[RMDB]
This 177-nucleotide RNA was probed chemically with 2A3.
RNA sequence: GGGAACGACUCGAGUAGAGUCGAAAAGUCGCGAACAGUGAUUCGAUUGAUGAUGAAGAAAGAGAAUUCUUGGUUCAGUUCUCCACCUUAACGACAGAAAAUAGGAUUGAUCAAAUUCUAUUGAGUCGGGCUGCGAUAGGUUCGCCUAUCGCAGCCCAAAAGAAACAACAACAACAAC
Reactivity to 2A3 in 0.01 (KOAc 150mM, MgCl2 10mM, bicine 150mM(pH8.5), 24C), signal-to-noise 1, nucleotides 027 to 126: g000u000c000g000c060g080a080a000c030a080g180u000g100a080u000u000c000g240a220u000u210g000a000u030g000a010u140g000a030a000g150a130a000a000g200a000g030a080a080u000u000c000u000u000g150g000u160u300c060a060g000u000u000c050u000c000c000a040c000c040u030u100a020a020c000g000a000c000a000g300a000a140a040a000u000a000g000g000a040u000u050g200a210u130c100a170a000a000u000u000c000u000a000u090u000g000a000g000u000c000

The RNA was probed in 150 mM KOAc, 10 mM MgCl2 and 150 mM bicine (pH 8.5) at 24 C.
2A3 adducts were read by reverse transcription with SuperScript II with manganese.